Chemical mapping of a 207-nucleotide RNA with 2A3. The RNA was probed in 150 mM KOAc, 10 mM MgCl2 and 150 mM bicine (pH 8.5) at 24 C. Values are in units of 0.01, from 0 to 300, in steps of 10. The 2A3 profile rests on 1,235 reads. For 2A3 the reverse transcriptase was SuperScript II with manganese.

RNA sequence: GGGAACGACUCGAGUAGAGUCGAAAAUCCACCUUCGGGUGGACUGUCUCCUAAGUCGGAGACAUGCAAAUGCAAGCUCGACGAUCUAUCGGAAACGAUAGGGAGAGCUUGGGUUUGCAACAGCUCCGAUAUGGAAUCACGAUCGGUUCGCCGAUAACGUUGACGAAGUCUUCGGACUUCGUCAACGAAAAGAAACAACAACAACAAC
Reactivity to 2A3 in 0.01 (KOAc 150mM, MgCl2 10mM, bicine 150mM(pH8.5), 24C), signal-to-noise 2, nucleotides 027 to 156: u000c000c000a020c020c030u060u120c300g150g000g010u040g000g000a000c000u050g110u030c030u060c050c000u050a260a050g020u000c000g000g040a020g010a120c000a070u000g020c000a000a000a000u020g180c000a000a000g000c000u040c030g190a280c000g010a070u020c000u010a020u010c000g060g000a070a070a040c020g020a010u000a000g010g020g000a010g000a010g020c000u000u000g000g020g010u000u000u010g010c040a000a000c080a030g040c000u000c000c000g020a000u000a040u140g060g060a070a040u180c100a090c210g080a030u080c050g040g050u080u090c210g060c070c010g060a030u180a130a040